[RMDB]
RNA sequence: GGGAACGACUCGAGUAGAGUCGAAAACUGAUAAUAACAAUAAAUCUGGUAAGGCACUUUCAAAAAAUAGCCAAACCACACAUCAUAAAGAAAACCACCACAAUCAAAAUCGGUAACUAUCAGCUUUCCAUUAAGAGAUUUUCGAAUCUCUUAAUGGAAAAGAAACAACAACAACAAC
Reactivity to 2A3 in 0.01 (KOAc 150mM, MgCl2 10mM, bicine 150mM(pH8.5), 24C), signal-to-noise 5, nucleotides 027 to 126: c010u020g030a020u040a280a010u110a080a030c070a070a060u250a270a110a050u120c040u050g000g010u030a020a030g030g000c020a020c100u100u130u110c180a100a050a070a040a040a090u100a070g000c000c000a000a020a050c020c000a010c000a010c010a050u190c040a080u160a170a100a020g110a040a130a040a000c000c000a020c010c000a040c050a050a090u160c060a060a100a020a130u160c070g060g000u050a040a030c010u040a040u060c020a000g030c000u000u000u000
An RNA of 177 nucleotides, treated with 2A3 and read out base by base. The reactions ran in a buffer of 150 mM KOAc, 10 mM MgCl2 and 150 mM bicine (pH 8.5), at 24 C. It was measured as part of the RMDB library RFM100. Values cover nucleotides 27 to 126. For 2A3, 2,127 sequencing reads were counted. 2A3 adducts were read by reverse transcription with SuperScript II with manganese.